[RMDB]
Background
An RNA of 177 nucleotides, treated with 2A3 and DMS and read out base by base.

RNA sequence: GGGAACGACUCGAGUAGAGUCGAAAAACCUAUGGAUUCGUCCAUAGGUGCUGGCGCGCGGCCUUUGUCCUGUCGCGUGUGCGUCGUGGGCGAUAUACGCGCAAUAGUGACAAUUCGUUGUCACUAAGACAUUGCCUAGGUUCGCCUAGGCAAUGUCAAAAGAAACAACAACAACAAC
Reactivity to 2A3 in 0.01 (KOAc 150mM, MgCl2 10mM, bicine 150mM(pH8.5), 24C), signal-to-noise 1, nucleotides 027 to 126: a020c000c000u010a000u030g020g010a010u010u040c160g020u000c050c000a000u000a040g020g040u000g000c130u110g080g140c060g000c000g000c000g010g030c010c000u070u010u040g030u050c010c000u000g000u040c010g000c050g110u300g230u300g120c000g000u000c050g080u090g000g020g000c000g000a000u000a020u010a140c000g010c020g000c040a030a070u090a060g000u000g000a000c010a020a040u050u050c300g090u130u000g000u000c000a010c000u010a040a050
Reactivity to DMS in 0.01 (KOAc 150mM, MgCl2 10mM, bicine 150mM(pH8.5), 24C), signal-to-noise 2, nucleotides 027 to 126: a010c000c000u000a000u010g010g000a040u000u020c200g030u000c000c000a010u000a000g000g020u000g010c070u000g010g030c050g010c020g010c030g040g010c070c090u010u030u000g010u000c020c040u010g020u000c000g030c000g040u010g000u000g010c010g010u000c010g010u000g010g000g010c010g000a030u000a180u000a040c060g020c000g010c030a120a130u000a010g010u000g010a010c000a020a040u000u000c160g020u000u000g000u000c000a020c010u010a020a080
The RNA was probed in 150 mM KOAc, 10 mM MgCl2 and 150 mM bicine (pH 8.5) at 24 C. The 2A3 profile rests on 1,729 reads. Source: RMDB library M2PK50, as collected in RNAgym.